RNA sequence: GGGAACGACUCGAGUAGAGUCGAAAAACAGUUACAAAGUACUUGGCCGGUGCUCUCAUUGGACUAAGGAAAUUGAAGGCCUGAGAACAUAAGCAACUGGUCACAAAGUGGGCGAGUGGCAAAGCUUGUGCUGGUGAGAAGGAAGGCAGAGGGUGGAAGGCUAAAAAUGAUUCGUCAUUUUUAGCCUAAAAGAAACAACAACAACAAC
Reactivity to DMS in 0.01 (KOAc 150mM, MgCl2 10mM, bicine 150mM(pH8.5), 24C), signal-to-noise 1, nucleotides 027 to 156: a070c010a160g010u020u000a160c050a050a120a090g000u000a060c040u010u010g020g000c000c000g030g070u000g000c060u000c080u000c010a120u020u010g020g030a070c000u010a100a120g000g010a080a080a240u010u000g000a120a100g000g030c020c010u030g010a090g020a040a080c020a050u000a080a070g050c020a080a090c020u010g030g020u000c010a080c070a020a090a130g020u000g000g050g040c010g020a120g010u010g020g040c030a060a040a190g000c010u030u010g010u000g000c020u040g030g070u010g020a090g000a100a050g000g010a090a040g020g070c020a100g000a070g000g050g000u000g020g020a070
Reactivity to 2A3 in 0.01 (KOAc 150mM, MgCl2 10mM, bicine 150mM(pH8.5), 24C), signal-to-noise 3, nucleotides 027 to 156: a010c030a020g040u130u120a070c040a070a140a020g020u040a040c030u050u080g020g000c020c020g040g020u020g000c010u020c020u040c050a100u040u100g020g030a060c040u040a050a150g110g020a060a140a210u120u130g050a140a060g040g000c010c010u010g010a030g010a060a020c040a100u090a070a030g020c000a030a110c010u020g020g000u020c030a010c010a060a110a040g040u120g010g030g000c060g000a050g020u050g010g000c040a080a010a000g000c010u060u040g020u060g040c020u010g000g000u050g010a050g020a030a000g040g000a020a010g020g000c040a030g030a020g000g040g000u020g020g060a050